[RMDB]
RNA sequence: GGGAACGACUCGAGUAGAGUCGAAAACUUGAGUUCGCUCAAGGAUCACCGUAGGUUUCUUUGAUCGAUGUGGCCACAACAGCAUCGCUUCGAAAGAGGCGAUGACAUGUGGUCCAUCGGGAGAAACCUAAACGGCAGGAACGCCCUUCGGGGCGAAUUGAGUUUAAAUAUUCGUAUUUAAACUCAAAAAAGAAACAACAACAACAAC
Reactivity to 2A3 in 0.01 (KOAc 150mM, MgCl2 10mM, bicine 150mM(pH8.5), 24C), signal-to-noise 5, nucleotides 027 to 156: c000u010u000g010a000g030u120u230c300g060c110u000c000a020a020g020g010a030u150c040a010c060c000g000u010a020g010g000u030u000u020c010u140u140u080g160a220u160c030g000a000u000g130u300g020g010c000c010a010c010a090a060c070a070g050c000a010u000c000g000c000u000u000c010g090a130a100a080g000a000g000g000c010g000a000u000g050a060c010a050u030g000u000g000g000u000c000c000a000u000c000g000g000g000a010g000a000a000a000c000c000u010a010a090a000c000g010g000c010a080g030g180a150a040c010g040c040c000c000u030u050c160g050g000g000g000c010g000a000a020
Reactivity to DMS in 0.01 (KOAc 150mM, MgCl2 10mM, bicine 150mM(pH8.5), 24C), signal-to-noise 3, nucleotides 027 to 156: c010u000u010g010a040g020u000u000c270g050c030u010c000a010a000g000g010a130u010c030a060c010c000g030u000a040g010g020u000u000u000c010u000u000u010g010a110u010c010g010a020u010g000u020g020g000c020c010a000c000a030a130c070a190g030c010a020u000c000g010c010u000u000c000g010a170a130a260g010a030g010g000c000g010a010u000g010a010c060a290u000g030u000g000g010u000c010c010a000u000c000g010g000g000a020g000a010a020a010c000c000u000a000a010a050c020g010g040c040a080g000g010a100a130c010g010c010c010c000u000u010c300g060g000g030g050c010g000a030a030